[RMDB]
RNA sequence: GGGAACGACUCGAGUAGAGUCGAAAACGACCGAACCCAGCAGAACACCCCGGCCUGGCAGGAGUCGAUCACCGGUGUGCCGGCCGCGCAGGCAAUCCGGUUUGCCAAGGAAUUCGCCCGCAACGCGUGCGAAGCACAUGUUCGCAUGUGCUUCGCAAAAAGAAACAACAACAACAAC
Reactivity to DMS in 0.01 (KOAc 150mM, MgCl2 10mM, bicine 150mM(pH8.5), 24C), signal-to-noise 1, nucleotides 027 to 126: c090g010a110c040c020g020a110a170c080c020c020a070g000c050a050g000a080a110c070a160c060c020c000c000g030g020c030c000u010g000g040c060a080g010g000a120g010u000c040g000a120u000c100a070c020c000g000g000u000g000u000g020c000c030g010g040c040c090g000c100g040c090a080g030g010c010a070a090u020c010c040g000g010u000u020u000g010c050c020a160a120g020g010a050a160u010u000c060g000c000c000c010g040c080a080a060c070g010c080g000